This 177-nucleotide RNA was probed chemically with 2A3 and DMS.
2A3 is a SHAPE reagent: it acylates the 2'-hydroxyl of flexible nucleotides of all four kinds.
The RNA was probed in 150 mM KOAc, 10 mM MgCl2 and 150 mM bicine (pH 8.5) at 24 C.
For DMS, 1,626 sequencing reads were counted.
Values are in units of 0.01, from 0 to 300, in steps of 10.
RNA sequence: GGGAACGACUCGAGUAGAGUCGAAAAGAAAAAGCGGAACUGGCGAAAUCGGUAGACGCAGUUGAUCAAAGAUCAACCGUAGAAAUACGUGCUGGUUCGAGUCCAGCCUUCCGCACCGAAAAAAAAACAUAAGAACGUUCUUCGGAACGUUCUUAUGAAAAGAAACAACAACAACAAC
Reactivity to 2A3 in 0.01 (KOAc 150mM, MgCl2 10mM, bicine 150mM(pH8.5), 24C), signal-to-noise 2, nucleotides 027 to 126: g030a000a110a000a010a010g000c000g000g010a010a010c010u020g010g000c020g050a020a050a000u050c010g030g020u040a050g050a150c070g050c210a040g000u000u000g010a020u020c130a300a190a150g030a010u010c000a020a010c000c000g000u030a020g090a080a100a030u080a030c050g020u030g000c000u010g000g030u000u030c010g010a010g030u050c000c010a010g010c030c040u010u010c000c010g020c000a010c000c050g070a100a050a000a000a000a000a000a000a000
Reactivity to DMS in 0.01 (KOAc 150mM, MgCl2 10mM, bicine 150mM(pH8.5), 24C), signal-to-noise 3, nucleotides 027 to 126: g000a090a090a080a140a130g000c010g010g010a060a120c050u000g000g000c010g010a040a010a010u010c030g020g000u000a040g010a140c100g000c100a050g020u000u000g010a010u010c030a120a150a180g010a020u000c000a000a010c010c000g020u010a060g010a080a080a090u000a020c050g030u000g000c000u000g030g010u000u000c040g000a300g000u000c010c010a050g000c050c300u000u000c000c010g000c030a100c010c040g030a040a000a000a010a000a030a070a040a160